[RMDB]
RNA sequence: GGGAACGACUCGAGUAGAGUCGAAAAGGGGAUGUUACGGAUUCGACAGGGAUAGUUCGAGCUUGAGUUGCGAGUCGGGGGGAUCGUCCUCGUUAUCAACGUCAAAGCCAAUAAUAACUGGCAAAGAAAAACAAAACCUAGCUUUCGCUGCCUAAUAACUGUUAAUGGUGUUCGCACCAUUAACAGUAAAAGAAACAACAACAACAAC
Reactivity to DMS in 0.01 (KOAc 150mM, MgCl2 10mM, bicine 150mM(pH8.5), 24C), signal-to-noise 1, nucleotides 027 to 156: g020g040g000g010a050u010g010u010u000a040c060g020g010a260u000u000c010g020a060c030a020g070g000g000a090u000a080g000u020u000c040g020a110g000c130u000u000g000a010g020u000u010g010c040g010a130g010u010c050g020g110g070g030g000g010a040u000c040g010u010c010c000u000c040g020u010u000a060u010c290a060a040c070g040u010c050a110a070a170g000c010c010a010a090u010a050a090u000a060a090c130u020g010g000c040a090a080a160g010a050a050a020a090a100c040a110a030a040a090c070c010u000a080g010c050u000u000u000c040g050c060u000g000c060c030u000a030a150u010a150
Reactivity to 2A3 in 0.01 (KOAc 150mM, MgCl2 10mM, bicine 150mM(pH8.5), 24C), signal-to-noise 3, nucleotides 027 to 156: g020g000g000g010a020u030g010u060u060a040c070g060g070a120u100u050c030g030a010c040a040g080g000g020a030u060a100g080u090u120c060g030a030g000c040u020u070g020a030g030u020u050g050c070g050a010g020u090c000g020g020g000g010g000g010a020u200c000g060u080c010c000u010c000g020u010u050a020u040c030a020a010c010g020u010c030a050a000a050g030c010c020a000a010u160a160a030u080a090a110c020u020g000g000c000a020a030a000g030a010a050a020a000a010c060a020a080a010a010c010c030u020a010g010c000u040u060u070c070g020c050u040g030c020c020u050a120a100u070a100